[RMDB]
The record gives the reactivity of an RNA of 177 nucleotides to 2A3 and DMS. For 2A3 the reverse transcriptase was SuperScript II with manganese. The RNA was probed in 150 mM KOAc, 10 mM MgCl2 and 150 mM bicine (pH 8.5) at 24 C. For DMS the reverse transcriptase was MarathonRT.

RNA sequence: GGGAACGACUCGAGUAGAGUCGAAAAAUGAUGAUGACGUUUUUGAACCGGCAUCUCCAAAUACAUUGAAAGUCCAUCAGCUGCCUUGAUCAGAGAGAGAAUUCAGGUUACCAAGACGGAAGGUGUCCUACAAUUCGGUUUUCGAACCGAAUUGUAGAAAAGAAACAACAACAACAAC
Reactivity to 2A3 in 0.01 (KOAc 150mM, MgCl2 10mM, bicine 150mM(pH8.5), 24C), signal-to-noise 5, nucleotides 027 to 126: a010u110g060a020u040g020a030u050g050a050c040g040u020u040u050u100u240g120a070a010c030c000g000g000c000a010u020c030u000c010c000a080a050a030u230a110c100a110u040u200g130a190a040a010g020u000c010c000a050u020c030a020g020c050u040g020c010c000u020u110g030a040u070c060a050g050a020g010a000g010a000g030a180a000u070u040c020a020g000g000u020u030a050c010c020a030a060g020a010c040g030g020a080a010g020g000u040g060u050c000
Reactivity to DMS in 0.01 (KOAc 150mM, MgCl2 10mM, bicine 150mM(pH8.5), 24C), signal-to-noise 3, nucleotides 027 to 126: a050u060g000a060u010g000a060u020g010a100c040g020u000u030u020u010u050g020a070a090c140c040g000g020c050a030u000c010u020c060c050a070a050a070u020a050c130a070u060u050g000a100a080a060g000u020c000c020a060u010c030a100g020c050u000g000c070c010u000u000g010a070u030c080a060g010a150g000a050g020a110g020a070a030u020u010c020a000g020g010u010u020a050c030c040a020a050g010a060c090g000g000a030a040g000g010u000g000u030c070